RNA sequence: GGGAACGACUCGAGUAGAGUCGAAAAGCACCGCGGGUGGCGCAGGCGCGCAAUAUCUCGAUAAGGCAGGUCGAGCGUCUGAUCGAGGACCACACCGACGCGCGUGGUCUCGGCUUCCUGGGCGAGCGAAAUCUAACUCGUUCGCGAGUUAGAUUUCAAAAGAAACAACAACAACAAC
Reactivity to 2A3 in 0.01 (KOAc 150mM, MgCl2 10mM, bicine 150mM(pH8.5), 24C), signal-to-noise 2, nucleotides 027 to 126: g030c010a030c110c020g000c010g030g000g030u060g000g000c030g010c030a020g110g010c060g010c000g000c040a020a070u110a070u140c040u010c010g050a050u030a170a060g130g070c080a040g000g060u050c040g030a030g010c040g020u000c010u020g030a080u080c010g030a050g010g090a050c050c000a040c010a000c040c020g240a160c050g070c010g020c030g020u020g030g000u000c030u010c010g040g000c020u040u020c010c010u010g000g050g030c060g010a040g030c040
Reactivity to DMS in 0.01 (KOAc 150mM, MgCl2 10mM, bicine 150mM(pH8.5), 24C), signal-to-noise 4, nucleotides 027 to 126: g020c040a040c070c010g050c020g010g010g020u010g000g000c020g030c020a090g010g010c120g030c030g020c070a110a110u000a040u000c030u000c060g000a100u000a110a080g010g020c070a060g020g020u010c050g000a060g010c090g010u010c010u000g010a080u000c020g010a050g020g000a090c070c050a070c030a040c020c020g010a120c180g000c090g020c060g030u000g010g010u010c000u000c010g000g000c060u000u000c000c020u000g010g010g010c050g000a260g020c130
Structure probing data (2A3 and DMS) for a 177-nucleotide construct. The data come from the RNA Mapping Database (RMDB), library OK2TRN. DMS adducts were read by reverse transcription with MarathonRT. The RNA was probed in 150 mM KOAc, 10 mM MgCl2 and 150 mM bicine (pH 8.5) at 24 C.